Annotation: The record gives the reactivity of an RNA of 177 nucleotides to 2A3 and DMS. Source: RMDB library OK1LIB, as collected in RNAgym. For 2A3, 1,401 sequencing reads were counted. Reactivities are given for positions 27 through 126.
[RMDB]
RNA sequence: GGGAACGACUCGAGUAGAGUCGAAAAGAAAGCGCCUGUUGGCCGCGCGCCUGACAUCCAAAUGGAGUUGCCGCGAGGCCCUCUUCCGUCGAGAUCCUGGGAGACGAUCGCGGUCAGCCCACAGAAAGGGUAUACAAAUCUUCGGAUUUGUAUACCCAAAAGAAACAACAACAACAAC
Reactivity to 2A3 in 0.01 (KOAc 150mM, MgCl2 10mM, bicine 150mM(pH8.5), 24C), signal-to-noise 2, nucleotides 027 to 126: g010a020a100a000g000c020g020c010c010u050g040u120u070g040g010c030c000g020c010g000c010g010c000c000u010g030a060c030a090u060c050c020a000a190a110u190g020g000a160g030u060u030g020c000c020g010c000g010a020g020g010c020c000c020u000c000u010u010c000c030g020u140c070g050a040g010a140u030c010c000u100g010g000g000a030g010a010c000g020a030u020c000g000c020g000g000u020c000a010g000c010c010c020a170c010a010g140a070a080a060
Reactivity to DMS in 0.01 (KOAc 150mM, MgCl2 10mM, bicine 150mM(pH8.5), 24C), signal-to-noise 2, nucleotides 027 to 126: g000a090a120a000g010c090g000c070c080u000g030u010u000g000g010c020c040g040c080g000c040g020c040c020u040g030a090c160a110u030c020c020a100a120a110u030g010g000a100g000u000u030g000c080c000g000c030g000a060g010g000c120c070c040u000c000u000u010c090c030g000u000c100g000a090g030a070u030c040c090u000g020g000g000a030g000a040c180g020a100u000c000g010c000g000g000u030c040a050g000c020c010c000a070c160a090g000a180a080a090